[RMDB]
RNA sequence: GGGAACGACUCGAGUAGAGUCGAAAAUUGUCAGCCCAAGGUUGAUGCCAUCGGCCAGAAUGGUGGUCAGUAACAACUUUUUGUCUUUAGGUCUGAUGUGAUGAUUUUUGAGAUGUGUGAAAUGGCGCGGGUAAAAUCAUUUCGAUGAUUUUACCCGAAAAGAAACAACAACAACAAC
Reactivity to 2A3 in 0.01 (KOAc 150mM, MgCl2 10mM, bicine 150mM(pH8.5), 24C), signal-to-noise 1, nucleotides 027 to 126: u000u070g080u090c040a030g010c000c000c040a020a010g080g000u090u040g000a100u020g030c020c030a030u020c040g040g070c000c000a050g020a230a210u100g130g000u020g050g010u070c000a000g020u030a050a010c000a000a000c000u140u110u070u090u130g070u020c020u030u080u080a060g050g000u050c020u040g020a050u050g080u050g040a110u050g030a030u050u030u000u060u080g070a070g000a090u040g080u020g000u040g140a030a140a110u030g010g000c050g010
Reactivity to DMS in 0.01 (KOAc 150mM, MgCl2 10mM, bicine 150mM(pH8.5), 24C), signal-to-noise 3, nucleotides 027 to 126: u020u000g010u020c060a120g000c020c000c030a100a110g000g010u000u000g020a090u000g020c010c070a070u000c110g020g010c010c040a090g010a130a070u010g010g050u000g010g010u010c040a070g000u010a080a100c070a060a080c090u000u000u000u000u000g000u000c040u000u000u000a050g000g000u000c020u000g000a120u000g010u000g030a050u000g000a020u000u000u000u010u000g000a080g000a030u000g020u010g020u010g010a040a080a110u000g010g020c070g010

Structure probing data (2A3 and DMS) for a 177-nucleotide construct. For DMS, 3,591 sequencing reads were counted. The data come from the RNA Mapping Database (RMDB), library OK2TRN. Reactivities are given for positions 27 through 126.